[RMDB]
RNA sequence: GGGAACGACUCGAGUAGAGUCGAAAACGUGGCCUAAUCCGAAAGGCAAGGAGUGCAAGAAACGUCAGCAAGACAAGAAGAGCCCGACAACGACGUGACACUAACUACGGAAAGUCGCAGGACACGAAAUUUUAAAUAUAUUCGUAUAUUUAAAAUUAAAAGAAACAACAACAACAAC
Reactivity to DMS in 0.01 (KOAc 150mM, MgCl2 10mM, bicine 150mM(pH8.5), 24C), signal-to-noise 6, nucleotides 027 to 126: c070g010u010g010g020c010c010u000a080a110u010c030c030g000a080a140a070g010g000c120a090a110g010g020a060g010u010g010c090a100a100g000a060a080a050c060g010u010c030a100g020c080a050a080g010a060c080a080a080g010a080a090g000a120g010c020c020c020g010a080c100a070a100c110g000a030c030g010u010g010a090c070a050c080u010a080a070c040u020a080c030g000g000a060a060a120g010u020c050g000c070a060g000g000a100c040a030c030g000a070
Reactivity to 2A3 in 0.01 (KOAc 150mM, MgCl2 10mM, bicine 150mM(pH8.5), 24C), signal-to-noise 2, nucleotides 027 to 126: c020g050u070g060g000c000c000u040a060a060u050c030c010g120a130a030a010g050g020c020a020a030g060g030a050g010u070g030c050a080a040g050a130a130a010c030g020u020c020a020g020c050a110a050g040a130c020a010a070g080a060a010g040a020g020c010c020c010g020a060c030a120a010c020g050a010c020g040u060g020a010c010a010c080u220a240a010c020u050a020c020g040g000a080a090a020g010u010c010g000c060a020g000g040a020c020a000c070g020a020